This 207-nucleotide RNA was probed chemically with 2A3.
The 2A3 profile rests on 491 reads.
The reactions ran in a buffer of 150 mM KOAc, 10 mM MgCl2 and 150 mM bicine (pH 8.5), at 24 C.

RNA sequence: GGGAACGACUCGAGUAGAGUCGAAAAGGAUUCAAACAUAACGAGCGUCGAAGUUAAUCUGACACUAAUUUAAUAGUAUGCAUAACUGUUAUUCUGUUGCAUGGCAAUUAGGCUUAAGUGGUAAGCAUUCGGGUAAAUGACUUCAAUUAGGAUUACACGCACUCCAGUGAUUCGUCACUGGAGUGCGAAAAGAAACAACAACAACAAC
Reactivity to 2A3 in 0.01 (KOAc 150mM, MgCl2 10mM, bicine 150mM(pH8.5), 24C), signal-to-noise 1, nucleotides 027 to 156: g060g040a060u050u060c020a050a000a050c010a040u180a040a120c090g020a050g040c080g010u080c040g090a060a000g010u070u040a110a130u050c010u130g060a000c010a010c040u030a080a090u020u150u110a050a040u060a050g060u030a040u100g020c040a010u000a190a060c070u060g050u210u080a120u140u060c050u040g060u080u010g010c050a050u000g030g010c000a030a030u040u000a090g080g000c010u010u050a060a050g000u050g030g060u050a010a010g000c020a000u070u010c020g030g000g000u060a080a080a110u130g020a060c000u000u000c030a030a120u020u060a090g030g040a000u010u110a060c040a040